Annotation: Chemical mapping of a 207-nucleotide RNA with 2A3. Reactivities are given for positions 27 through 156. For 2A3 the reverse transcriptase was SuperScript II with manganese. The RNA was probed in 150 mM KOAc, 10 mM MgCl2 and 150 mM bicine (pH 8.5) at 24 C. The data come from the RNA Mapping Database (RMDB), library OK3TST.
RNA sequence: GGGAACGACUCGAGUAGAGUCGAAAAGAAAGGCCCUGUUGGCAGGAGAAUGCGCGCUCUGCUUGUAUGCAGGGAGCUCUAUCAGGAAGAGAGACUUUCCCCUCCCUAUGAGCAGCGGAAAUAAGGGUGAGGAUGCAGCAGUGCCCCAGGGCCCUGAGACUAGCAUGAGUUUCGACUCAUGCUAGUCAAAAGAAACAACAACAACAAC
Reactivity to 2A3 in 0.01 (KOAc 150mM, MgCl2 10mM, bicine 150mM(pH8.5), 24C), signal-to-noise 1, nucleotides 027 to 156: g080a060a110a030g020g000c000c000c000u010g030u050u270g040g040c020a020g070g080a090g030a120a220u080g000c040g000c000g060c000u040c030u020g040c030u130u140g090u100a050u140g050c010a010g000g030g000a000g040c030u000c000u060a270u210c050a160g180g020a190a130g000a000g010a000g030a060c010u020u040u110c000c000c000c000u070c000c000c000u000a030u090g050a040g030c080a030g010c080g080g070a100a140a010u110a060a040g110g000g040u050g020a050g060g000a060u080g000c010a040g000c020a010g070u000g010c000c000c020c000a040g000g000g040c000c000c000u010g010a010